This 177-nucleotide RNA was probed chemically with DMS and 2A3. It was measured as part of the RMDB library OK2TRN. For 2A3, 2,512 sequencing reads were counted. 2A3 adducts were read by reverse transcription with SuperScript II with manganese. For DMS the reverse transcriptase was MarathonRT. Reactivities are given for positions 27 through 126.

[RMDB]
RNA sequence: GGGAACGACUCGAGUAGAGUCGAAAAGCUCGCCGCCGGGGUCGAAGAACCGGCAGUCGCGGUCGCCGACACCGACGAGCCGACCAGCUUCACCGUCAGCAACGGCACCGACGCGACGGUCGUCGUGCCGACGAGCUAUCUUCGGAUAGCUCGUCGGAAAAGAAACAACAACAACAAC
Reactivity to DMS in 0.01 (KOAc 150mM, MgCl2 10mM, bicine 150mM(pH8.5), 24C), signal-to-noise 3, nucleotides 027 to 126: g010c030u000c040g020c050c020g020c030c040g000g010g010g000u000c040g000a120a160g000a130a110c120c000g020g040c020a080g030u010c120g000c070g020g000u000c050g000c170c030g020a040c040a020c040c010g000a060c010g000a140g000c030c020g000a120c080c100a090g000c040u000u000c070a120c050c010g000u000c060a120g010c080a110a080c050g010g020c030a060c060c030g010a070c050g040c030g000a080c080g000g010u010c050g000u000c030g000u000g020
Reactivity to 2A3 in 0.01 (KOAc 150mM, MgCl2 10mM, bicine 150mM(pH8.5), 24C), signal-to-noise 2, nucleotides 027 to 126: g040c000u020c050g030c050c040g010c040c030g000g060g010g000u080c080g040a080a040g030a130a110c030c000g090g000c050a010g040u010c050g000c030g060g060u080c050g030c130c010g000a010c020a020c010c010g050a050c020g010a010g000c070c000g040a050c030c070a010g060c020u020u090c050a080c110c010g060u080c030a050g000c050a100a040c010g010g000c030a030c010c050g060a070c000g030c040g090a110c040g040g030u030c020g020u020c010g010u030g040